This 177-nucleotide RNA was probed chemically with 2A3. The data come from the RNA Mapping Database (RMDB), library OK2TST.
RNA sequence: GGGAACGACUCGAGUAGAGUCGAAAAGACAAUGAAUUGAUUCAACUGGCCCGACCAGCACUGGAAGAUGGCAAACGUGUAGAGAUCGAACACGAAGUCAUCAACAUCAAUCGCGUUGUCGGCACCAAUGCGGUCCUGAGUUCGCUCAGGACCGCAUAAAAGAAACAACAACAACAAC
Reactivity to 2A3 in 0.01 (KOAc 150mM, MgCl2 10mM, bicine 150mM(pH8.5), 24C), signal-to-noise 1, nucleotides 027 to 126: g020a000c000a020a040u040g030a010a010u020u030g030a000u020u070c050a300a240c090u000g010g000c060c100c050g120a240c040c000a000g030c110a060c070u020g000g000a060a070g000a070u040g010g000c030a180a100a150c080g000u020g010u040a030g010a040g030a300u270c060g060a140a000c000a000c010g020a030a010g020u000c000a000u030c020a020a060c010a010u010c000a000a050u000c030g100c000g200u000u000g000u010c000g000g050c030a070c010c010a000